[RMDB]
RNA sequence: GGGAACGACUCGAGUAGAGUCGAAAACGCGGAAUAGGCAAAAGUGUUGCGGACCUGCGUAGUUUCGAAAAGCGGACGGCCACGACGGCCCUUUGGGUGGGGUUGCAGCCGUAGCGCAUCGCAAAGAGACUCUAAGACUCUUCGGAGUCUUAGAGUCAAAAGAAACAACAACAACAAC
Reactivity to DMS in 0.01 (KOAc 150mM, MgCl2 10mM, bicine 150mM(pH8.5), 24C), signal-to-noise 1, nucleotides 027 to 126: c000g040c010g020g010a070a100u000a300g050g010c010a000a060a200a160g020u010g000u010u000g000c020g010g010a190c160c000u020g000c030g000u000a020g080u000u000u000c010g000a010a020a210a000g000c040g000g000a010c050g000g080c010c020a100c020g000a300c050g000g000c020c000c010u000u000u020g090g030g060u000g020g000g000g010u000u000g000c010a300g000c000c000g050u000a010g010c020g020c000a000u000c010g000c260a070a060a020g050a150
Structure probing data (DMS) for a 177-nucleotide construct. The DMS profile rests on 526 reads. The reactions ran in a buffer of 150 mM KOAc, 10 mM MgCl2 and 150 mM bicine (pH 8.5), at 24 C.